Structure probing data (2A3 and DMS) for a 207-nucleotide construct. Values are in units of 0.01, from 0 to 300, in steps of 10. Source: RMDB library M2RFPK, as collected in RNAgym. DMS adducts were read by reverse transcription with MarathonRT. For 2A3, 1,737 sequencing reads were counted.

RNA sequence: GGGAACGACUCGAGUAGAGUCGAAAAACCUUAUUUUGUGAAGCUGAGGGAUUUGGCCCAUAGAAGCUUCAGCAACCGACUUUAAAUAGCACGGUGCUAAUACCAACGAGCAACUCGAAUGAUAAGUAAAACGUUGACAAGUUCGCUUGUCAACGAAGUACCAGGAUAUGUUCGCAUAUCCUGGUACAAAAGAAACAACAACAACAAC
Reactivity to 2A3 in 0.01 (KOAc 150mM, MgCl2 10mM, bicine 150mM(pH8.5), 24C), signal-to-noise 3, nucleotides 027 to 156: a010c050c000u110u090a260u070u150u160u100g110u030g010a000a000g000c000u010g010a020g010g050g010a080u010u010u100g050g020c000c000c000a080u170a190g050a050a000g000c000u000u000c000a000g000c000a020a000c030c000g040a000c010u100u060u190a160a290a300u170a140g010c030a020c020g000g010u000g000c000u010a020a020u050a130c000c000a010a060c020g040a010g100c090a130a100c090u050c110g120a150a070u100g090a100u050a160a010g050u070a080a090a060a020c000g000u000u000g000a010c010a000a010g010u050u060c160g100c090u010u000g000u010c000a000a000c000g000a020a010
Reactivity to DMS in 0.01 (KOAc 150mM, MgCl2 10mM, bicine 150mM(pH8.5), 24C), signal-to-noise 2, nucleotides 027 to 156: a150c050c010u000u000a090u020u020u000u020g000u000g040a070a000g010c000u000g020a100g020g000g000a170u000u000u010g030g000c000c010c020a140u000a130g010a120a060g010c030u000u010c020a060g030c020a060a050c000c000g000a060c000u000u000u000a100a150a080u010a020g000c000a050c020g000g020u000g000c010u000a030a080u010a050c030c000a110a190c190g000a080g020c030a090a160c020u000c030g000a120a090u010g020a150u010a060a070g000u000a060a020a110a220c010g010u000u000g010a020c000a020a000g010u000u000c300g030c000u000u020g040u000c020a000a010c000g000a020a090